[RMDB]
RNA sequence: GGGAACGACUCGAGUAGAGUCGAAAAUGUCGGCGAUCCAGCGUGCUGCCCGGGUCGCUCCGCCGGCGAAGGUCAUGCGGCUGGAGGCCUGGUGGGCGAUCUCUACCCGUUCUCCCUCCGCGGCGAACGCCCCAUCAAAGUUCGCUUUGAUGGGGCGAAAAGAAACAACAACAACAAC
Reactivity to 2A3 in 0.01 (KOAc 150mM, MgCl2 10mM, bicine 150mM(pH8.5), 24C), signal-to-noise 1, nucleotides 027 to 126: u240g060u050c060g040g020c000g040a030u010c020c030a000g040c030g060u130g000c020u080g000c010c020c030g050g010g000u040c010g000c020u040c010c010g060c000c010g030g030c030g020a070a030g060g030u060c070a130u300g110c150g010g030c050u040g030g000a040g170g110c000c060u060g070g010u080g060g000g000c010g040a060u070c020u020c010u080a010c000c010c030g010u040u010c030u060c030c000c000u000c010c000g000c060g020g010c000g020a040a010
Reactivity to DMS in 0.01 (KOAc 150mM, MgCl2 10mM, bicine 150mM(pH8.5), 24C), signal-to-noise 1, nucleotides 027 to 126: u000g020u000c120g000g030c030g000a040u000c010c050a110g030c060g030u010g010c010u010g020c030c050c050g000g000g000u000c020g000c010u010c030c010g000c010c030g020g020c030g000a300a150g010g030u000c070a160u010g040c150g010g010c030u000g000g020a180g010g020c000c000u000g050g000u000g010g000g000c060g010a020u000c030u010c030u010a030c080c000c010g010u010u000c030u010c040c020c010u000c020c010g000c040g000g020c050g000a090a120